[RMDB]
RNA sequence: GGGAACGACUCGAGUAGAGUCGAAAAGUGCGUCCCUCCCGAAGCUGCGCGCUCGGUCGAAGAGGACGACCUUCCCCGAUAGAGACGGUACCGUUCAUCGGUCAAGGGUAUACGGUAGCUGCGCUCCGCCCAUCUAAAGGUUCGCCUUUAGAUGGGCAAAAGAAACAACAACAACAAC
Reactivity to DMS in 0.01 (KOAc 150mM, MgCl2 10mM, bicine 150mM(pH8.5), 24C), signal-to-noise 3, nucleotides 027 to 126: g010u030g030c000g020u000c000c000c010u000c020c000c000g000a060a060g000c020u010g010c210g020c170g030c010u000c000g020g000u020c140g000a090a060g020a110g030g000a030c000g000a030c030c090u000u000c030c020c000c100g020a050u020a080g000a030g010a060c030g000g000u010a000c000c000g010u020u010c120a050u000c010g000g020u020c200a100a130g010g000g010u000a090u000a060c030g000g010u000a030g010c010u000g030c080g000c020u010c040c300
Reactivity to 2A3 in 0.01 (KOAc 150mM, MgCl2 10mM, bicine 150mM(pH8.5), 24C), signal-to-noise 8, nucleotides 027 to 126: g100u130g030c000g000u010c000c000c020u010c020c010c000g060a130a050g010c020u080g020c050g000c020g000c160u000c010g000g030u100c070g040a080a020g090a170g030g010a000c010g030a040c000c020u030u030c010c000c000c000g090a090u120a200g030a010g000a010c010g020g000u020a010c000c000g010u030u070c080a040u040c060g040g140u120c080a080a070g130g000g020u070a040u020a060c010g020g010u010a050g090c010u010g010c050g000c120u030c010c030
Conditions: 150 mM KOAc, 10 mM MgCl2 and 150 mM bicine (pH 8.5), 24 C. Structure probing data (DMS and 2A3) for a 177-nucleotide construct. DMS adducts were read by reverse transcription with MarathonRT. The data come from the RNA Mapping Database (RMDB), libraries RFM100 and RFMREP.